[RMDB]
RNA sequence: GGGAACGACUCGAGUAGAGUCGAAAAUGUGGUUCGGGCAUUCUUAGAGCGGAGGAGACUGCGUGAGGCUGGUUUCACAGAGCAGCGUCCACCUCCCGCUUUCGACGGUGGAAGGAUCACGGGCCGGUGCCUUCUGAGCCCACUAUGACCUAAUAAGCAACAUCUUAAGGUUCGCCUUAAGAUGUUGAAAAGAAACAACAACAACAAC
Reactivity to 2A3 in 0.01 (KOAc 150mM, MgCl2 10mM, bicine 150mM(pH8.5), 24C), signal-to-noise 6, nucleotides 027 to 156: u150g020u060g000g030u040u050c050g000g010g040c020a030u130u000c100u120u210a050g000a030g020c020g000g030a010g020g010a030g020a040c060u170g030c030g100u060g030a080g020g100c040u030g030g090u080u210u210c140a140c020a050g050a010g070c010a010g010c010g080u050c020c010a210c030c010u040c010c020c030g000c000u030u060u060c060g030a050c030g020g000u040g020g040a090a030g040g010a030u120c030a020c060g000g050g000c010c010g000g040u030g030c000c000u050u070c030u090g030a030g020c010c030c000a020c040u060a070u170g040a030c000c020u060a120a100u110a180a020g060
Reactivity to DMS in 0.01 (KOAc 150mM, MgCl2 10mM, bicine 150mM(pH8.5), 24C), signal-to-noise 3, nucleotides 027 to 156: u000g000u010g050g020u000u000c020g030g000g020c020a080u000u000c050u000u010a060g010a080g030c050g000g000a300g010g010a100g020a000c000u010g040c020g010u010g020a050g030g010c040u010g000g000u000u000u010c130a100c030a130g030a100g020c000a130g010c030g000u000c020c030a070c030c000u010c020c010c010g020c020u000u000u010c100g010a100c080g000g020u010g010g010a060a100g030g010a130u000c020a060c060g010g040g040c010c040g000g020u000g020c020c010u000u000c060u010g010a100g020c010c010c010a050c040u000a040u000g000a300c020c010u000a040a140u000a080a240g010